About this RNA
An RNA of 207 nucleotides, treated with DMS and 2A3 and read out base by base. Reactivities are given for positions 27 through 156. For DMS the reverse transcriptase was MarathonRT. For 2A3 the reverse transcriptase was SuperScript II with manganese.
RNA sequence: GGGAACGACUCGAGUAGAGUCGAAAAAGCCGGUCUACGGACCGGCAAAACGUUCAUCUCGUUUUACGGGCCGCAUUAAGAUUGAAGCCAAGGAACGGUGACUUCAGACUACGACUACGGUCGUAGAUUACGCCUCCGAGUUUCGACUCGGAGGCAACAAAUACCAUAGAUUCGUCUAUGGUAUUUGAAAAGAAACAACAACAACAAC
Reactivity to DMS in 0.01 (KOAc 150mM, MgCl2 10mM, bicine 150mM(pH8.5), 24C), signal-to-noise 2, nucleotides 027 to 156: a190g020c050c010g030g000u000c010u000a090c180g050g030a010c000c000g000g060c060a000a000a030a020c080g010u010u010c130a150u000c060u010c040g010u000u000u000u000a150c010g000g020g040c050c000g000c000a120u000u010a080a120g000a190u010u000g000a030a010g000c000c000a070a140g010g000a040a110c040g020g010u000g000a040c020u000u010c000a150g010a260c010u030a050c040g010a040c010u010a080c300g060g000u000c000g040u000a000g000a110u000u000a080c130g030c030c020u000c010c000g020a060g010u000u000u020c280g030a080c000u010c000g010g030a020g010g000c000a010a010
Reactivity to 2A3 in 0.01 (KOAc 150mM, MgCl2 10mM, bicine 150mM(pH8.5), 24C), signal-to-noise 3, nucleotides 027 to 156: a000g000c000c000g000g000u000c010u030a070c200g080g050a030c000c030g000g010c000a010a000a000a000c040g040u090u030c030a040u020c050u010c040g020u040u030u040u190a030c040g000g010g010c000c040g040c060a100u170u180a150a050g120a300u070u120g000a030a000g000c010c020a050a060g060g010a080a010c040g000g040u050g030a040c020u060u010c080a030g020a130c030u030a000c010g000a010c000u020a010c220g050g000u000c000g000u020a010g010a010u100u170a070c120g000c000c020u000c000c030g000a000g020u040u110u060c090g080a020c000u000c000g000g010a000g000g000c010a000a000